[RMDB]
RNA sequence: GGGAACGACUCGAGUAGAGUCGAAAAUGCACUGGAAAAGAAAUAUUCUCAUUAUGUAUUUUCCCCAAAUGAUGGCCCACCAUUGCAUUUGAAUACCUGCUGUCAAUAUCAAUAAUAUCGAGUAAUUUUCAAGCAAUCGAUUCGUCGAUUGCUUGAAAAAAGAAACAACAACAACAAC
Reactivity to 2A3 in 0.01 (KOAc 150mM, MgCl2 10mM, bicine 150mM(pH8.5), 24C), signal-to-noise 1, nucleotides 027 to 126: u030g000c000a000c080u020g000g050a180a190a000a000g110a030a140a020u100a120u030u000c030u050c000a000u050u100a080u240g070u040a220u020u090u020u110c000c070c000c000a040a050a030u080g000a000u000g000g000c000c000c000a010c000c000a010u000u070g000c000a000u000u000u120g080a040a010u080a060c000c000u060g040c000u070g110u120c070a010a010u000a040u160c050a010a010u170a140a080u150a000u170c030g020a020g110u010a010a210u020u000